[RMDB]
RNA sequence: GGGAACGACUCGAGUAGAGUCGAAAAGAUAUGGACGCAUGCUGACAUGAUCUAUGGUCGGAAACGACCAGAGAUCAACAGCAGUUUGCGUCCUAAGUCAAAAGGAUUAGGGUUCGCCCUAAUCCAACUAAUCUAGACCGUUCGCGGUCUAGAUUAGAAAAGAAACAACAACAACAAC
Reactivity to 2A3 in 0.01 (KOAc 150mM, MgCl2 10mM, bicine 150mM(pH8.5), 24C), signal-to-noise 4, nucleotides 027 to 126: g010a000u020a020u080g010g010a010c000g000c000a010u020g000c000u010g020a090c060a300u300g000a000u010c000u010a060u020g010g000u010c010g000g000a030a010a010c010g000a000c000c010a000g010a000g000a000u020c030a130a090c170a110g040c000a000g000u000u010u010g000c010g000u010c000c000u000a000a000g020u010c000a010a030a080a230g000g000a000u000u000a010g030g020g050u040u120c300g250c010c010c000u020a000a000u000c000c000a000a000
Reactivity to DMS in 0.01 (KOAc 150mM, MgCl2 10mM, bicine 150mM(pH8.5), 24C), signal-to-noise 4, nucleotides 027 to 126: g000a010u000a050u020g000g000a020c010g020c010a000u000g000c000u000g010a080c150a200u020g010a010u000c000u010a060u000g000g010u000c000g000g010a010a020a040c000g020a020c000c000a000g010a000g000a000u000c000a080a090c220a120g010c000a000g000u000u000u000g020c000g030u010c000c000u000a000a040g010u010c000a120a110a150a120g000g000a020u000u000a010g010g000g030u010u010c300g010c000c000c000u000a020a010u000c000c000a030a070